[RMDB]
RNA sequence: GGGAACGACUCGAGUAGAGUCGAAAAAAAAAAGAUAUGGAGACAGCCGAGAACGAUCAACCAAUGAUGUCGGAAACGAUUGAGGUUACGUGAUCGUUCGUUUGACGCUGUCUCCUAAGUCAAAAAACACAACUAAUUGGUUCGCCAAUUAGUUGUGAAAAGAAACAACAACAACAAC
Reactivity to 2A3 in 0.01 (KOAc 150mM, MgCl2 10mM, bicine 150mM(pH8.5), 24C), signal-to-noise 1, nucleotides 027 to 126: a000a000a000a000a000a000g080a040u080a050u170g000g000a010g000a000c010a000g040c020c020g070a040g020a040a000c000g000a020u000c000a010a010c020c000a020a160u180g090a020u130g060u010c020g010g020a040a060a020c000g000a000u000u050g070a040g060g040u050u090a080c210g110u140g040a010u000c000g000u000u010c000g000u060u060u140g010a050c000g010c010u000g010u000c000u000c000c010u000a000a010g010u000c000a030a090a040a090a000a000
Reactivity to DMS in 0.01 (KOAc 150mM, MgCl2 10mM, bicine 150mM(pH8.5), 24C), signal-to-noise 2, nucleotides 027 to 126: a000a060a060a080a070a030g000a030u000a300u000g000g020a000g000a000c000a000g000c010c000g010a080g000a010a000c000g000a020u000c000a060a050c030c040a070a090u020g010a090u010g010u000c000g010g000a110a070a110c000g000a030u010u010g000a110g010g000u000u000a060c300g010u000g000a000u000c000g010u000u000c030g000u000u000u030g020a090c300g010c000u000g000u000c000u000c000c000u000a000a100g010u010c030a000a040a060a070a080a150

Chemical mapping of a 177-nucleotide RNA with 2A3 and DMS. The 2A3 profile rests on 2,377 reads. For 2A3 the reverse transcriptase was SuperScript II with manganese. The RNA was probed in 150 mM KOAc, 10 mM MgCl2 and 150 mM bicine (pH 8.5) at 24 C. It was measured as part of the RMDB library TTRDEL.